This 177-nucleotide RNA was probed chemically with DMS and 2A3. Reactivities are given for positions 27 through 126.

RNA sequence: GGGAACGACUCGAGUAGAGUCGAAAAGCUUCUUGAAUUUGCGCAACAAGAAACAAGUGAACCUGAGGAUCUUGUGAAACAUGAAGCGAAGAGAGUAACUGAGGCACGUUUGGAGCAGGCUAUGGCAUCAACCAUCCUGGUUCGCCAGGAUGGUUGAAAAAGAAACAACAACAACAAC
Reactivity to DMS in 0.01 (KOAc 150mM, MgCl2 10mM, bicine 150mM(pH8.5), 24C), signal-to-noise 3, nucleotides 027 to 126: g020c020u000u000c000u000u010g010a080a100u010u030u050g010c060g000c160a200a090c030a010a000g010a050a070a100c040a160a040g000u030g020a060a250c050c010u000g000a080g010g000a080u000c010u000u000g020u000g000a140a060a040c090a000u000g000a000a080g000c020g000a120a090g010a120g000a040g010u030a040a110c080u000g000a080g000g000c030a070c060g000u010u000u020g020g000a090g050c030a060g000g030c040u000a000u050g000g010c120a130
Reactivity to 2A3 in 0.01 (KOAc 150mM, MgCl2 10mM, bicine 150mM(pH8.5), 24C), signal-to-noise 3, nucleotides 027 to 126: g010c000u000u000c010u000u080g110a250a200u090u150u270g070c120g020c040a040a120c000a030a020g000a010a020a010c040a010a040g060u060g100a030a070c010c010u080g030a110g120g030a030u000c010u000u020g000u020g010a070a000a050c040a070u110g030a030a010g020c030g090a160a000g080a010g000a020g060u060a100a050c050u060g060a120g080g010c030a000c070g000u020u070u140g030g010a030g020c040a010g060g000c000u040a050u120g010g000c000a020
The data come from the RNA Mapping Database (RMDB), library OK1LIB. The DMS profile rests on 3,828 reads.